An RNA of 177 nucleotides, treated with DMS and 2A3 and read out base by base.
The data come from the RNA Mapping Database (RMDB), library OK2TST.
For DMS, 6,584 sequencing reads were counted.
RNA sequence: GGGAACGACUCGAGUAGAGUCGAAAAGCCAACACCAUUGCGAGAUUACGCAGAAACCAGCCCGUCGCAAGGUGCAAAACUCAUCGCAGCUCAAGGUAACCAAAAUGCUGCUAAUUGUCUCGACGGACUCAUAAAUGAGGUUCGCCUCAUUUAUGAGAAAAGAAACAACAACAACAAC
Reactivity to DMS in 0.01 (KOAc 150mM, MgCl2 10mM, bicine 150mM(pH8.5), 24C), signal-to-noise 7, nucleotides 027 to 126: g030c050c020a140a140c070a050c030c020a080u000u000g010c030g010a100g010a150u010u000a080c100g010c060a080g010a080a100a100c140c090a080g010c030c060c040g010u000c020g010c080a040a030g010g000u000g020c110a030a050a090a100c100u010c100a080u010c180g010c010a020g020c010u000c130a110a100g000g010u000a040a160c110c060a040a060a090a060u010g010c010u000g010c020u000a070a080u010u000g000u000c030u000c030g010a080c150g010g010a240
Reactivity to 2A3 in 0.01 (KOAc 150mM, MgCl2 10mM, bicine 150mM(pH8.5), 24C), signal-to-noise 7, nucleotides 027 to 126: g080c010c010a020a020c030a020c040c010a230u040u100g010c020g010a050g040a150u110u210a120c050g000c030a020g100a100a070a020c030c010a030g050c020c020c010g060u030c000g000c050a040a040g030g010u040g000c000a040a040a030a120c050u060c090a130u130c110g000c010a020g030c010u040c090a060a100g110g000u080a090a090c040c020a070a050a030a060u110g010c010u000g000c000u010a040a110u080u090g030u000c010u000c050g060a060c030g010g050a050